[RMDB]
RNA sequence: GGGAACGACUCGAGUAGAGUCGAAAACGUCCAUCGUACGCGAUGGACGAAGACAGUCGCGAGGAAAGUCCGGGCUGACUGUCCACGACAGAACCCGGCUUAACGCAGUCGGUACGCCGACUGCGAACUAUGGCCCACUCUUCGGAGUGGGCCAUAGAAAAGAAACAACAACAACAAC
Reactivity to 2A3 in 0.01 (KOAc 150mM, MgCl2 10mM, bicine 150mM(pH8.5), 24C), signal-to-noise 2, nucleotides 027 to 126: c000g000u000c000c000a010u000c000g050u020a000c300g040c040g090a000u000g000g000a000c000g020a000a000g000a000c020a000g080u170c000g030c050g150a150g010g140a050a080a000g100u140c030c000g000g000g010c030u080g210a080c010u000g000u000c000c060a220c290g030a030c000a010g010a010a000c050c000c000g000g000c080u080u090a020a000c000g010c000a000g090u020c020g010g000u050a060c280g050c070c000g000a000c010u000g000c040g010a020a000
This 177-nucleotide RNA was probed chemically with 2A3. The reactions ran in a buffer of 150 mM KOAc, 10 mM MgCl2 and 150 mM bicine (pH 8.5), at 24 C. Reactivities are rounded to 0.1 and cut off at 0 and 3. Source: RMDB library OK1LIB, as collected in RNAgym.